[RMDB]
RNA sequence: GGGAACGACUCGAGUAGAGUCGAAAAUUCAGAGGCUUGAAUGCCAAUGAAGAGUAACAAGAGUUGAGGCAACUGCUAGCGUUCAGGUAACCCCUUUACGUGAUGCAUUUGUCCACUCUUGCACAGAUCUAAGCUUGAUGUUCGCAUCAAGCUUAGAAAAAGAAACAACAACAACAAC
Reactivity to 2A3 in 0.01 (KOAc 150mM, MgCl2 10mM, bicine 150mM(pH8.5), 24C), signal-to-noise 2, nucleotides 027 to 126: u000u010c010a000g010a030g030g000c050u110u160g220a300a080u180g040c010c000a020a000u010g010a010a010g030a010g080u080a090a050c010a010a010g000a010g010u070u150g060a160g090g000c000a010a000c010u010g040c000u000a010g010c000g000u010u020c020a010g040g000u040a060a070c040c000c000c000u000u010u020a000c000g020u040g010a020u180g000c000a000u000u000u010g000u000c010c000a000c000u000c000u000u000g020c030a030c010a030g110a060
Reactivity to DMS in 0.01 (KOAc 150mM, MgCl2 10mM, bicine 150mM(pH8.5), 24C), signal-to-noise 3, nucleotides 027 to 126: u000u000c000a000g010a300g000g010c000u000u010g020a180a050u020g010c000c000a010a250u000g010a020a020g010a150g010u000a120a070c010a000a020g020a010g020u010u000g020a140g060g000c020a000a010c060u000g010c000u000a300g000c010g000u000u010c050a020g020g000u030a200a100c260c190c000c000u000u000u000a020c010g010u000g000a110u030g010c000a000u000u000u000g010u000c000c000a020c010u000c000u000u000g000c140a050c080a150g010a160